Conditions: 150 mM KOAc, 10 mM MgCl2 and 150 mM bicine (pH 8.5), 24 C. Chemical mapping of a 177-nucleotide RNA with DMS and 2A3. For 2A3 the reverse transcriptase was SuperScript II with manganese. Reactivities are given for positions 27 through 126. For DMS the reverse transcriptase was MarathonRT.
RNA sequence: GGGAACGACUCGAGUAGAGUCGAAAAAACCAUGCACCAGUGGAUUCUGAGCCAUGGUUGAGAUGCAGGGAGUGGGAUGGGGCUCAGGACCAGCUGCAAACCGACCCACCGUGAAAGUUUGUGGCACGCAAUAAGGGUAAUUCGUUACCCUUAUUGCAAAAGAAACAACAACAACAAC
Reactivity to DMS in 0.01 (KOAc 150mM, MgCl2 10mM, bicine 150mM(pH8.5), 24C), signal-to-noise 8, nucleotides 027 to 126: a060a030c020c000a040u000g010c140a090c080c030a100g000u010g020g010a120u010u000c010u000g000a070g010c110c020a070u010g010g020u000u000g010a130g000a070u010g010c060a080g000g010g010a110g020u010g010g000g020a150u010g020g000g000g020c030u000c030a040g000g000a050c070c040a100g000c010u010g010c010a010a020a030c020c020g000a210c060c010c030a050c150c080g010u010g000a050a110a100g000u000u000u010g010u000g000g020c030a150c260
Reactivity to 2A3 in 0.01 (KOAc 150mM, MgCl2 10mM, bicine 150mM(pH8.5), 24C), signal-to-noise 4, nucleotides 027 to 126: a000a000c030c000a050u040g000c030a050c050c010a090g050u060g080g110a250u110u030c010u020g010a010g010c040c010a060u070g060g020u040u090g050a120g010a050u140g040c080a050g080g000g060a150g040u120g010g020g070a110u160g100g010g060g000c010u020c040a010g010g030a020c000c010a020g010c000u010g000c010a010a010a010c010c010g040a040c010c030c010a050c040c050g060u100g120a060a040a030g010u020u030u020g010u000g010g000c020a000c050

Source: RMDB library OK2TRN, as collected in RNAgym.